Overview:
An RNA of 177 nucleotides, treated with 2A3 and DMS and read out base by base. For 2A3, 3,459 sequencing reads were counted. Conditions: 150 mM KOAc, 10 mM MgCl2 and 150 mM bicine (pH 8.5), 24 C. The data come from the RNA Mapping Database (RMDB), library VIROID. For DMS the reverse transcriptase was MarathonRT.

RNA sequence: GGGAACGACUCGAGUAGAGUCGAAAAACCGAGGGCGGAAGCCUGCUUCAGACAGGAGUAAUCCCAGUAGAAACAGGAGUAAUCCCUGCUGAAACAUGGUUUUCACCCUUCCUUUCCACGCAGGGGUCUUAUACUGUUCGUUCGCGAACAGUAUAAGAAAAGAAACAACAACAACAAC
Reactivity to 2A3 in 0.01 (KOAc 150mM, MgCl2 10mM, bicine 150mM(pH8.5), 24C), signal-to-noise 2, nucleotides 027 to 126: a000c050c020g010a020g000g000g020c020g000g010a010a000g000c000c000u000g030c000u010u010c010a240g050a290c010a010g010g020a040g030u030a090a040u010c010c020c020a030g080u130a040g170a090a190a010c050a040g000g010a020g000u030a010a030u030c010c000c000u020g000c020u020g000a010a010a000c030a080u230g000g000u010u000u000u010c020a030c010c000c000u010u030c000c000u020u030u000c020c000a080c060g040c040a020g000g000g030g010u030
Reactivity to DMS in 0.01 (KOAc 150mM, MgCl2 10mM, bicine 150mM(pH8.5), 24C), signal-to-noise 1, nucleotides 027 to 126: a080c140c140g000a050g000g000g030c010g000g020a030a030g000c020c000u000g010c030u000u000c010a020g000a160c010a030g000g010a020g000u000a160a140u010c020c000c030a170g020u010a110g000a120a130a140c150a160g020g000a030g000u000a170a140u010c030c000c000u000g010c000u000g000a010a020a020c010a010u020g020g010u010u000u000u000c030a030c000c020c000u000u020c020c080u000u000u000c010c030a120c170g040c160a050g000g000g010g000u030